[RMDB]
RNA sequence: GGGAACGACUCGAGUAGAGUCGAAAAGAUAUGGAGUCUGAACUGAGCUUGGAUUUAUGGGAGAACCGUGGGUCGGAAACGACCCACUCAGUAUCCCAUUGUCAGCUCUAAGUAGGACUCCUAAGUCAAAACCUCUAAUCGUUCGCGAUUAGAGGAAGUUCACGUAACUGUUCGCAGUUACGUGAACAAAAGAAACAACAACAACAAC
Reactivity to 2A3 in 0.01 (KOAc 150mM, MgCl2 10mM, bicine 150mM(pH8.5), 24C), signal-to-noise 2, nucleotides 027 to 156: g020a010u060a040u070g000g000a010g000u030c010u030g000a020a020c020u010g010a000g040c050u130u210g190g050a090u280u300u130a010u090g000g000g000a020g000a030a000c020c000g010u000g010g020g000u000c010g020g010a030a080a090c010g010a010c010c000c000a000c000u000c000a000g020u000a000u000c000c010c000a000u000u000g000u000c000a000g010c000u000c000u010a000a000g000u000a010g010g000a000c000u010c000c000u000a010a000g000u000c010a000a060a080a160c000c000u000c000u000a000a000u000c010g070u100u040c300g020c020g110a000u000u000a000g000a000g000g000a000a020

Structure probing data (2A3) for a 207-nucleotide construct.
Conditions: 150 mM KOAc, 10 mM MgCl2 and 150 mM bicine (pH 8.5), 24 C.
Values cover nucleotides 27 to 156.
For 2A3, 2,131 sequencing reads were counted.